[RMDB]
The data come from the RNA Mapping Database (RMDB), library OK3TST. Structure probing data (2A3 and DMS) for a 207-nucleotide construct. For 2A3 the reverse transcriptase was SuperScript II with manganese. For DMS the reverse transcriptase was MarathonRT. Values cover nucleotides 27 to 156.

RNA sequence: GGGAACGACUCGAGUAGAGUCGAAAACUAACACACUUGGUGAUGGAAUCUGGCUGGAAAGCCCCAAAAUUAUGCAAAUUUGUACCGGUUCAGUAUGCGAACACAUCGGUGAUUUUAAAUUUUUGGAACAGGAGGCUGACGUUAUUGGCCUCUCAGCUGAUGACACGUAUUUCGAUACGUGUCAUCAAAAAGAAACAACAACAACAAC
Reactivity to 2A3 in 0.01 (KOAc 150mM, MgCl2 10mM, bicine 150mM(pH8.5), 24C), signal-to-noise 2, nucleotides 027 to 156: c000u030a080a000c030a000c010a000c080u110u300g070g000u030g010a120u070g030g010a050a000u030c050u040g030g060c020u020g020g050a000a030a060g010c000c020c000c040a040a050a050a080u170u070a080u100g010c030a050a070a000u110u120u040g040u080a000c000c000g050g020u040u090c000a000g020u050a080u300g120c110g000a190a020c030a000c000a080u050c030g000g000u020g000a020u020u010u060u110a060a170a130u060u020u010u010u180g010g020a060a060c030a070g030g000a000g020g050c030u030g020a030c030g070u230u100a140u170u230g010g030c000c000u000c000u000c000a000g030c000
Reactivity to DMS in 0.01 (KOAc 150mM, MgCl2 10mM, bicine 150mM(pH8.5), 24C), signal-to-noise 1, nucleotides 027 to 156: c030u030a070a130c070a160c090a110c090u000u010g010g040u020g000a070u000g050g010a180a120u000c040u000g010g000c030u000g000g000a150a120a130g010c010c000c010c010a010a010a040a070u000u000a070u030g010c170a070a040a090u000u010u010g010u000a000c000c010g000g030u000u000c070a190g020u000a080u000g010c080g030a080a080c060a070c050a030u010c020g030g020u000g010a090u000u000u000u000a040a060a190u000u000u000u000u000g050g030a050a110c030a130g030g060a030g040g030c030u010g030a080c110g010u000u000a190u010u030g000g010c100c010u000c010u000c000a040g030c220